[RMDB]
RNA sequence: GGGAACGACUCGAGUAGAGUCGAAAAUGAUUUCUGUCACCUUACUACUGAAGAAGAUACCAUUCCAGUGGACCACUGUGACCCAAGGGACAUUCAACCAUCAUGAUGUGGUCUUCACCUCCAUUCCUAAGAACACUACGUUCGCGUAGUGUUCUUAAAAAGAAACAACAACAACAAC
Reactivity to DMS in 0.01 (KOAc 150mM, MgCl2 10mM, bicine 150mM(pH8.5), 24C), signal-to-noise 5, nucleotides 027 to 126: u020g010a120u010u010u010c030u000g010u010c020a060c060c030u000u010a090c060u000a080c080u010g000a110a070g010a080a060g010a090u010a070c110c090a060u010u010c050c060a100g020u010g010g010a050c070c040a050c060u010g010u010g010a080c080c070c070a080a090g000g010g010a050c100a100u020u000c130a070a110c040c040a080u010c050a060u010g010a050u020g040u000g010g000u010c030u000u020c060a100c040c020u010c020c030a140u000u020c010c030
Reactivity to 2A3 in 0.01 (KOAc 150mM, MgCl2 10mM, bicine 150mM(pH8.5), 24C), signal-to-noise 8, nucleotides 027 to 126: u130g040a070u010u050u030c010u030g040u020c020a040c020c010u040u120a080c070u030a030c020u060g070a090a050g030a050a010g040a110u100a140c020c020a070u050u060c010c020a010g030u030g030g040a050c030c020a020c070u050g030u040g080a040c040c010c010a060a080g040g010g010a020c040a080u100u090c040a100a060c030c000a040u050c010a040u100g060a040u100g080u030g050g020u000c000u030u050c010a050c010c010u030c010c010a060u040u020c010c000

This 177-nucleotide RNA was probed chemically with DMS and 2A3. Values cover nucleotides 27 to 126. For 2A3 the reverse transcriptase was SuperScript II with manganese. The RNA was probed in 150 mM KOAc, 10 mM MgCl2 and 150 mM bicine (pH 8.5) at 24 C.